[RMDB]
RNA sequence: GGGAACGACUCGAGUAGAGUCGAAAAGCGUUGACUUAUGGACUCUGGAAUCUUAGACAAUGUACAGUCAUCUAUAAUCAUGGCAUAUUUAAUACAUUGUUUUAUAGCAUAGUAGUUAUCUACGAUGUUAGAUAUUUCUCUCAAUAAAUCAAUCACAGUUACGUCUCGGUUUCGACCGAGACGUAACAAAAGAAACAACAACAACAAC
Reactivity to 2A3 in 0.01 (KOAc 150mM, MgCl2 10mM, bicine 150mM(pH8.5), 24C), signal-to-noise 1, nucleotides 027 to 156: g050c020g050u030u060g030a040c010u060u000a040u130g000g040a040c020u000c070u110g040g000a080a030u080c090u040u070a060g010a010c000a010a000u020g000u040a020c080a040g010u000c000a010u000c010u140a200u120a200a070u150c070a020u040g000g070c040a070u040a190u210u220u100a140a010u070a030c000a000u000u000g020u000u060u040u000a070u090a030g000c010a000u000a010g050u000a000g010u090u200a120u120c000u010a000c020g010a030u070g000u000u090a010g000a040u040a020u070u060u000c040u000c010u000c060a010a090u090a150a020a110u090c020a050a040u250c070a130c010a150